[RMDB]
RNA sequence: GGGAACGACUCGAGUAGAGUCGAAAAUUUCAGCAUGUCGUGCGUAUUUGGAUUCACGCACGACACAGCAGUUAACAAUCGAAGUCUUAGUGACUGUCGAUGGUGUAAAUUUUAGAACAGUCGUUCUCAAACGGAUGGUUCGCCAUCCGUAAAAGAAACAACAACAACAAC
Reactivity to 2A3 in 0.01 (KOAc 150mM, MgCl2 10mM, bicine 150mM(pH8.5), 24C), signal-to-noise 9, nucleotides 027 to 129: u030u030u040c030a010g000c000a000u010g000u000c000g000u000g000c010g010u020a110u070u180u240g300g050a170u130u130c070a000c000g000c000a000c000g000a000c000a000c010a000g000c000a010g050u080u160a110a030c040a030a030u000c010g010a020a000g030u000c010u080u210a140g060u130g210a010c010u090g200u070c010g000a000u020g000g030u100g010u030a050a110a080u100u100u070u110a070g020a050a020c030a020g000u000c000g000u000u000c000u000c000a040a060
Reactivity to DMS in 0.01 (KOAc 150mM, MgCl2 10mM, bicine 150mM(pH8.5), 24C), signal-to-noise 8, nucleotides 027 to 129: u000u030u030c030a060g000c020a210u000g010u000c010g000u000g020c030g030u030a040u040u020u080g050g000a220u050u040c160a000c030g020c010a000c000g020a040c010a020c070a080g000c020a080g000u010u000a100a080c050a070a020u070c010g030a040a010g000u020c010u000u000a060g050u080g040a000c020u000g000u020c020g000a020u020g020g020u050g040u010a030a000a060u050u050u040u050a140g000a070a140c170a060g030u020c020g020u010u020c020u030c030a050a080